RNA sequence: GGGAACGACUCGAGUAGAGUCGAAAAGCGCAAUGGUUCGCCAUUGCGCCAAGCGCCGAUGGUAGUGUGGGGUCUCGCCAUGCGAGAGUAGGGAACUGCCAGAGUACGGGUCUUUCGAGACCCGUAAUGGUUGUAGAAUUUUCGAAUUCUACAACCAAAAAGAAACAACAACAACAAC
Reactivity to DMS in 0.01 (KOAc 150mM, MgCl2 10mM, bicine 150mM(pH8.5), 24C), signal-to-noise 4, nucleotides 027 to 126: g000c010g010c000a000a000u000g000g010u000u010c250g010c000c000a010u000u000g010c000g030c010c040a040a100g010c170g020c020c040g000a140u010g010g010u000a020g010u000g000u010g000g010g000g010u000c020u010c020g000c020c180a130u010g010c030g000a030g010a040g020u010a070g000g000g010a260a050c020u000g000c020c010a110g010a130g020u000a010c000g000g010g000u000c000u000u000u020c160g000a010g000a010c000c000c000g000u000a000a040
Reactivity to 2A3 in 0.01 (KOAc 150mM, MgCl2 10mM, bicine 150mM(pH8.5), 24C), signal-to-noise 2, nucleotides 027 to 126: g010c000g010c000a000a000u010g020g030u020u110c160g000c050c020a000u000u000g000c000g000c010c000a050a020g060c140g100c040c090g110a110u070g010g020u000a040g020u020g070u140g050g040g020g020u010c020u040c020g010c050c090a120u290g020c020g010a040g010a020g020u170a040g010g030g020a010a020c010u010g020c020c020a050g010a010g210u040a000c000g010g020g010u000c010u030u110u100c180g030a010g000a020c030c000c010g000u010a000a000
Source: RMDB library M2PK50, as collected in RNAgym. This 177-nucleotide RNA was probed chemically with DMS and 2A3. Values cover nucleotides 27 to 126. DMS adducts were read by reverse transcription with MarathonRT. 2A3 is a SHAPE reagent: it acylates the 2'-hydroxyl of flexible nucleotides of all four kinds.